[RMDB]
RNA sequence: GGGAACGACUCGAGUAGAGUCGAAAAAAGGACGGAGGCGAACCGCCGUGGGCGUUGGAUUCUGCAAACGAACCUAAGCGCUACAACCGUUUCGUUUUCGACUGGUCUGGAAGGUAUGAUUCCUUCUUGCGGCGAUGUAAUUUACGUUGCAGAUCCGAGUGGUAGAACCAUUCGUGGUUCUACCACUAAAAGAAACAACAACAACAAC
Reactivity to 2A3 in 0.01 (KOAc 150mM, MgCl2 10mM, bicine 150mM(pH8.5), 24C), signal-to-noise 1, nucleotides 027 to 156: a000a030g000g000a050c030g020g000a020g030g020c010g000a020a030c110c010g060c020c020g010u070g000g050g000c010g030u090u060g010g030a200u180u010c010u010g080c000a070a090a100c190g030a030a010c000c010u040a100a020g000c010g010c000u070a100c020a050a010c020c010g000u000u000u050c040g000u100u000u020u050c020g060a090c060u090g000g070u100c060u060g030g000a000a000g000g030u050a070u300g130a100u230u140c010c000u000u030c000u030u020g060c030g110g000c030g030a030u030g000u040a020a070u050u040u140a050c090g010u040u000g000c000a000g000a030u010c000c000g000